Structure probing data (2A3 and DMS) for a 177-nucleotide construct. The 2A3 profile rests on 2,362 reads. Reactivities are given for positions 27 through 126. The RNA was probed in 150 mM KOAc, 10 mM MgCl2 and 150 mM bicine (pH 8.5) at 24 C. 2A3 adducts were read by reverse transcription with SuperScript II with manganese.
[RMDB]
RNA sequence: GGGAACGACUCGAGUAGAGUCGAAAAUUGGUUGCCAUGACUAUUGGUGAUGACGGCGAACUGGUCGGCGUGCAUCGUGAAGGCGCGCCCAUGGCUGGCCGGCACGAUUUCGGAACAUUCGGUCAUAACCUCCAUACGGUUUCGACCGUAUGGAGGUAAAAGAAACAACAACAACAAC
Reactivity to 2A3 in 0.01 (KOAc 150mM, MgCl2 10mM, bicine 150mM(pH8.5), 24C), signal-to-noise 3, nucleotides 027 to 126: u050u040g060g030u030u030g000c000c020a040u060g040a080c070u100a110u220u080g050g100u060g020a110u120g040a010c040g020g030c050g030a020a120c080u100g060g000u090c020g020g000c020g000u000g000c010a030u100c130g120u140g090a100a040g080g000c060g000c000g010c000c040c000a090u160g000g020c040u040g050g000c000c000g050g000c040a000c040g140a120u040u090u120c000g020g000a050a030c010a090u030u080c110g010g020u000c020a030u060a040
Reactivity to DMS in 0.01 (KOAc 150mM, MgCl2 10mM, bicine 150mM(pH8.5), 24C), signal-to-noise 2, nucleotides 027 to 126: u080u020g050g010u000u000g030c080c050a030u000g020a050c090u020a050u000u000g060g000u030g000a100u000g000a030c100g000g000c030g030a030a170c030u000g010g010u030c120g000g000c020g010u030g000c020a070u040c060g030u010g000a200a090g020g000c000g020c130g000c060c020c080a000u080g000g000c000u030g000g000c000c020g010g010c080a050c010g000a080u010u000u060c110g000g000a040a140c060a080u000u000c020g000g020u000c030a140u020a150